[RMDB]
RNA sequence: GGGAACGACUCGAGUAGAGUCGAAAAUGGGCACAGGCAGUGGGUGUAGAGGUAACCAGUAGCUUUGAGAAGCUACAUGUAGCUCACCAGUGGUUUUCUCUAAGGAAUCACAAAAGUAAACUACCCAUAGACAGAAGAUAUUCGUAUCUUCUGUCUAAAAAGAAACAACAACAACAAC
Reactivity to 2A3 in 0.01 (KOAc 150mM, MgCl2 10mM, bicine 150mM(pH8.5), 24C), signal-to-noise 5, nucleotides 027 to 126: u070g000g010g000c050a030c020a060g010g050c020a030g030u050g030g030g010u070g040u090a060g020a030g020g050u050a030a030c020c010a020g010u010a000g010c000u060u050u110g220a290g020a080a000g010c000u010a000c010a030u080g020u010a010g020c010u020c020a040c010c020a020g020u040g000g030u010u020u050u070c060u010c020u020a110a070g060g020a050a030u030c010a000c010a050a100a030a000g080u110a040a100a040c030u050a050c000c010c000a010
Reactivity to DMS in 0.01 (KOAc 150mM, MgCl2 10mM, bicine 150mM(pH8.5), 24C), signal-to-noise 8, nucleotides 027 to 126: u010g010g010g020c050a060c100a070g000g010c070a060g020u000g020g010g020u000g010u010a040g010a060g010g010u000a050a060c140c060a100g010u000a010g010c010u000u010u010g000a190g010a080a040g010c010u000a010c010a070u000g010u000a090g010c040u000c050a060c070c090a160g010u000g000g010u000u000u000u010c050u010c130u010a110a100g010g010a040a030u000c030a020c040a050a050a060a090g000u010a050a060a060c100u000a090c010c060c030a150